[RMDB]
Structure probing data (2A3) for a 207-nucleotide construct.
The 2A3 profile rests on 756 reads.
The RNA was probed in 150 mM KOAc, 10 mM MgCl2 and 150 mM bicine (pH 8.5) at 24 C.
Reactivities are rounded to 0.1 and cut off at 0 and 3.
It was measured as part of the RMDB library RNAMAK.
2A3 adducts were read by reverse transcription with SuperScript II with manganese.
RNA sequence: GGGAACGACUCGAGUAGAGUCGAAAAGCUCGUUUCGACGAGCCCCCUGGGGUCUGGGAAGAAGCCCGAAGAACGACAUGCUCUGAAGCCUCCACGGAGCAACAGCGGGAGGGUGUAAACCAGACGGAGGCACCCGGCUGCGCGACUUCGGUCGCAAUGGUUUGCUUUAUUUCGAUAAAGCAAACCAAAAAGAAACAACAACAACAAC
Reactivity to 2A3 in 0.01 (KOAc 150mM, MgCl2 10mM, bicine 150mM(pH8.5), 24C), signal-to-noise 1, nucleotides 027 to 156: g000c000u000c000g000u010u120u140c270g120a050c000g000a000g000c080c010c000c010c000u130g020g010g040g030u000c000u000g020g020g010a050a210g010a060a000g090c020c010c010g060a300a060g040a040a010c000g050a000c000a060u080g020c000u000c010u040g040a100a010g010c000c000u000c020c010a040c020g090g010a000g040c020a030a090c080a050g100c010g010g090g010a200g050g020g000u100g000u040a000a000a000c000c000a000g010a050c010g000g000a000g000g000c020a030c000c000c000g170g000c110u210g050c100g000c000g030a000c010u000u130c110g150g000u040c000g020c060a000a030